[RMDB]
RNA sequence: GGGAACGACUCGAGUAGAGUCGAAAAGAUAUGGAUUGUCUACCAUUUCCACGUUCUUUUGACGCACCUACUUCGGAAACGAAGUAGUGCGAUAAGAACGUGUGGAAAUGGUAGACAAUCCUAAGUCGCUCGUAUAAGAGUUCGCUCUUAUACGAGCAAAAGAAACAACAACAACAAC
Reactivity to DMS in 0.01 (KOAc 150mM, MgCl2 10mM, bicine 150mM(pH8.5), 24C), signal-to-noise 1, nucleotides 027 to 126: g000a150u010a300u000g030g000a000u000u000g000u000c010u000a010c000c000a000u000u000u000c000c000a020c000g000u000u000c000u010u000u000u020g040a300c120g020c010a010c300c150u000a010c000u000u000c000g000g000a150a170a270c000g010a020a010g020u000a030g010u020g000c000g020a030u000a000a010g010a010a020c010g010u010g040u000g000g020a000a000a000u000g010g010u000a000g000a000c010a000a030u000c000c000u000a030a110g000u010c100